An RNA of 177 nucleotides, treated with DMS and 2A3 and read out base by base. The DMS profile rests on 8,476 reads.
RNA sequence: GGGAACGACUCGAGUAGAGUCGAAAAGCAACUCGGUUCGCCGAGUUGCAAAUAAAAUCAGCGGUAAAUUCGAGGCGUAAAUUACGGCUGAACGCCUCGAUAAAAGUCUUCAGUUCGCUGAAGACAACUUAAAGUAUAGCUUCGGCUAUACUUUAAGAAAAGAAACAACAACAACAAC
Reactivity to DMS in 0.01 (KOAc 150mM, MgCl2 10mM, bicine 150mM(pH8.5), 24C), signal-to-noise 5, nucleotides 027 to 126: g000c010a000a010c000u000c000g010g010u000u000c210g030c010c010g020a020g020u000u000g020c000a010a040a040u000a040a050a090a100u000c040a060g010c040g020g010u010a070a090a130u000u000c000g010a020g000g020c000g010u000a030a080a090u000u000a050c070g010g010c030u000g000a160a030c000g000c000c000u000c000g000a020u010a030a060a080a090g010u000c000u000u000c000a000g010u000u020c230g020c000u000g000a010a000g000a000c010a060a090
Reactivity to 2A3 in 0.01 (KOAc 150mM, MgCl2 10mM, bicine 150mM(pH8.5), 24C), signal-to-noise 5, nucleotides 027 to 126: g000c000a000a000c000u010c010g010g050u060u090c180g020c070c000g000a000g000u000u000g000c000a000a000a000u020a000a010a000a040u080c030a010g080c030g180g070u090a100a140a170u130u030c010g000a000g000g000c010g010u020a030a090a020u180u100a070c060g080g000c040u050g030a020a010c010g000c000c000u000c000g010a000u010a010a020a010a010g000u000c000u000u000c000a020g040u040u080c140g040c090u010g000a000a000g010a000c010a010a020